This 177-nucleotide RNA was probed chemically with 2A3 and DMS.
RNA sequence: GGGAACGACUCGAGUAGAGUCGAAAAUUCUUUGCAAUAACGCUGUUUUGCAAAACCGUGAUAGUGCUGAGCCGAUGAGCCUCUAAUGAAAUUAUAGACUCAUCGGCUCAGGACCAUUGCGGUUGUGAGUAAGCUUAAUCUUCGGAUUAAGCUUACUAAAAGAAACAACAACAACAAC
Reactivity to 2A3 in 0.01 (KOAc 150mM, MgCl2 10mM, bicine 150mM(pH8.5), 24C), signal-to-noise 4, nucleotides 027 to 126: u050u010c020u030u020u090g010c030a030a070u110a160a030c060g100c300u210g030u060u020u000u020g020c010a030a000a010a080c000c010g000u000g000a010u000a010g010u070g170c000u000g000a010g000c000c000g010a000u000g000a010g010c040c010u020c030u040a090a090u150g190a150a030a080u200u100a100u040a040g000a010c000u000c000a000u000c000g010g000c010u000c000a000g000g000a000c000c000a010u000u010g000c000g010g010u000u010g000u010g000
Reactivity to DMS in 0.01 (KOAc 150mM, MgCl2 10mM, bicine 150mM(pH8.5), 24C), signal-to-noise 5, nucleotides 027 to 126: u010u000c020u000u010u000g010c010a040a020u020a040a050c070g020c220u020g010u000u000u000u000g000c020a040a040a030a010c000c000g020u010g000a010u000a020g020u000g000c000u000g010a010g010c000c000g000a010u000g000a010g020c020c000u000c060u000a020a030u010g000a130a070a300u000u000a010u000a010g000a010c000u000c000a000u000c000g010g000c010u000c000a000g000g010a010c000c040a010u000u000g000c010g010g000u000u000g010u010g010
For DMS the reverse transcriptase was MarathonRT.